Annotation
The record gives the reactivity of an RNA of 177 nucleotides to 2A3 and DMS. It was measured as part of the RMDB library OK2TST.

RNA sequence: GGGAACGACUCGAGUAGAGUCGAAAAGUCUCCAACAUCUCUCUUACUCCAGAUUCACCUGUGCUGAUGGACGAGUCCUGGCUUGGAAACAGUGCUUAUGGAGACAUGUUCAAGUUAGUAAGGGAUACUACUAAAUUUAGUUCGCUAAAUUUAGUAGAAAAGAAACAACAACAACAAC
Reactivity to 2A3 in 0.01 (KOAc 150mM, MgCl2 10mM, bicine 150mM(pH8.5), 24C), signal-to-noise 9, nucleotides 027 to 126: g020u000c020u000c070c010a040a070c050a150u070c030u000c000u010c000u060u020a020c010u010c040c030a040g010a200u090u060c050a070c080c020u060g020u060g070c030u070g060a300u060g040g020a030c030g010a010g020u020c010c050u130g140g000c010u010u030g020g010a040a050a010c010a020g020u020g050c010u130u080a060u220g030g010a030g010a020c010a040u070g020u040u070c070a060a040g030u090u080a010g000u070a010a010g020g010g010a020u040a050
Reactivity to DMS in 0.01 (KOAc 150mM, MgCl2 10mM, bicine 150mM(pH8.5), 24C), signal-to-noise 9, nucleotides 027 to 126: g010u000c020u000c010c050a110a120c170a100u000c110u000c030u000c010u000u000a040c020u000c100c060a080g000a130u000u000c060a080c050c030u000g020u000g020c090u010g010a100u000g000g010a300c070g000a070g010u010c040c090u000g010g010c060u000u000g010g000a260a100a070c060a030g010u000g010c040u010u000a090u000g010g000a040g010a030c070a080u000g010u000u000c080a050a090g010u000u000a030g010u000a030a030g010g000g000a060u000a210